Structure probing data (2A3 and DMS) for a 177-nucleotide construct. Source: RMDB library OK1LIB, as collected in RNAgym. Values are in units of 0.01, from 0 to 300, in steps of 10. The 2A3 profile rests on 5,835 reads.
[RMDB]
RNA sequence: GGGAACGACUCGAGUAGAGUCGAAAAAGGCAAAUGGCUUUUUCGCUGAUUUCGUGUAAACAUUUUGUCCGGCAAUUCAUUAUUUUUAACGUGACGCAUAGCGAGAGAAGCUAUUUGUUGCUCUCGCAUGCAGUACCUCAUUCGUGAGGUACUGCAUAAAAGAAACAACAACAACAAC
Reactivity to 2A3 in 0.01 (KOAc 150mM, MgCl2 10mM, bicine 150mM(pH8.5), 24C), signal-to-noise 8, nucleotides 027 to 126: a010g040g000c020a020a020a010u020g020g020c000u030u010u000u010u030c010g010c010u050g130a300u030u090u080c040g020u090g050u150a070a110a060c050a120u070u080u060u190g070u050c050c040g070g020c080a060a090u150u070c050a040u020u180a090u060u150u020u050u100a070a040c040g030u090g070a020c040g010c100a060u160a040g000c000g000a010g000a010g010a100a000g010c000u010a020u030u020u010g010u000u030g010c010u000c000u010c030g030c020
Reactivity to DMS in 0.01 (KOAc 150mM, MgCl2 10mM, bicine 150mM(pH8.5), 24C), signal-to-noise 3, nucleotides 027 to 126: a140g000g000c020a020a020a000u000g010g000c000u000u000u000u000u000c000g000c000u000g010a210u010u030u000c030g000u020g010u020a030a040a060c160a060u000u010u010u010g020u010c170c070g010g020c180a100a090u020u000c090a040u010u030a040u040u010u000u010u000a030a060c060g000u010g000a050c110g000c190a030u030a030g010c030g000a010g000a020g020a010a000g000c010u000a020u000u000u000g010u010u000g000c070u000c010u000c000g030c270